[RMDB]
Chemical mapping of a 177-nucleotide RNA with DMS and 2A3.
The DMS profile rests on 2,461 reads.
The RNA was probed in 150 mM KOAc, 10 mM MgCl2 and 150 mM bicine (pH 8.5) at 24 C.
For DMS the reverse transcriptase was MarathonRT.
It was measured as part of the RMDB library RFM100.
RNA sequence: GGGAACGACUCGAGUAGAGUCGAAAACCCCCAAUACUACCCGCAGGUAGACCUUGGUGGAGAUGUCUAGUGAGGUAGAGCGACCGAUUGGGUGGCCAGCAGUAGAAAUACUGCACCACUUUGUCAAGUUGUAGCUCUGUUUCGACAGAGCUACAACAAAAGAAACAACAACAACAAC
Reactivity to DMS in 0.01 (KOAc 150mM, MgCl2 10mM, bicine 150mM(pH8.5), 24C), signal-to-noise 2, nucleotides 027 to 126: c010c020c000c100c060a110a060u070a200c010u000a050c040c010c060g020c180a140g010g010u000a020g010a170c060c060u020u000g010g000u060g010g000a100g000a090u000g000u000c010u000a090g000u020g000a100g010g000u000a030g000a070g050c120g020a060c170c120g000a040u000u010g010g000g040u000g020g000c070c230a070g000c000a000g020u000a010g000a130a080a220u000a020c000u020g020c000a200c020c000a010c000u030u000u010g010u000c010a110a130
Reactivity to 2A3 in 0.01 (KOAc 150mM, MgCl2 10mM, bicine 150mM(pH8.5), 24C), signal-to-noise 5, nucleotides 027 to 126: c010c000c000c000c040a050a070u060a120c000u010a000c000c000c010g030c040a030g010g120u060a010g010a030c000c030u060u160g150g030u210g150g020a150g000a040u130g020u000c010u070a060g030u030g060a130g020g010u020a010g000a030g080c070g060a070c060c030g040a040u050u110g020g000g000u000g000g000c050c090a060g000c010a000g000u000a010g020a010a070a000u000a010c000u000g000c000a010c000c000a000c000u030u020u040g030u020c060a080a070